This 177-nucleotide RNA was probed chemically with DMS and 2A3. The data come from the RNA Mapping Database (RMDB), library TTRDEL. For DMS the reverse transcriptase was MarathonRT. For 2A3, 46,332 sequencing reads were counted.
RNA sequence: GGGAACGACUCGAGUAGAGUCGAAAAGAUAUGGAUCAUGGACAUGCGAUUCGGAUCGGAAACGAUCUCCUUUCGCAACAGCCCGCUGAUCCUAAGUCAAAGCAUGGUUACUUCGGUAACCAUGCAAGUUAUAAAUUACGUUCGCGUAAUUUAUAACAAAAGAAACAACAACAACAAC
Reactivity to DMS in 0.01 (KOAc 150mM, MgCl2 10mM, bicine 150mM(pH8.5), 24C), signal-to-noise 9, nucleotides 027 to 126: g000a040u000a300u010g000g000a010u000c000a040u010g010g010a020c030a240u000g010c000g000a010u000u000c150g010g000a010u000c000g010g000a090a100a200c010g000a010u000c000u010c030c040u000u010u000c000g020c010a030a070c230a130g010c000c000c000g010c210u000g010a010u000c000c000u010a040a090g000u000c040a090a130a150g000c000a000u000g000g000u000u000a010c000u000u010c190g020g010u000a000a010c000c000a000u000g000c000a010a020
Reactivity to 2A3 in 0.01 (KOAc 150mM, MgCl2 10mM, bicine 150mM(pH8.5), 24C), signal-to-noise 8, nucleotides 027 to 126: g040a010u080a030u160g000g000a000u010c010a020u160g010g010a060c040a110u110g010c010g000a000u030u040c060g010g000a000u010c010g020g020a070a050a030c020g010a010u010c150u180c040c020u020u030u020c000g000c010a030a100c050a080g060c000c000c010g000c030u000g000a000u010c000c000u030a160a030g030u040c060a140a070a010g010c000a000u000g000g000u000u000a010c000u030u050c170g120g000u000a000a000c000c000a000u000g000c000a010a000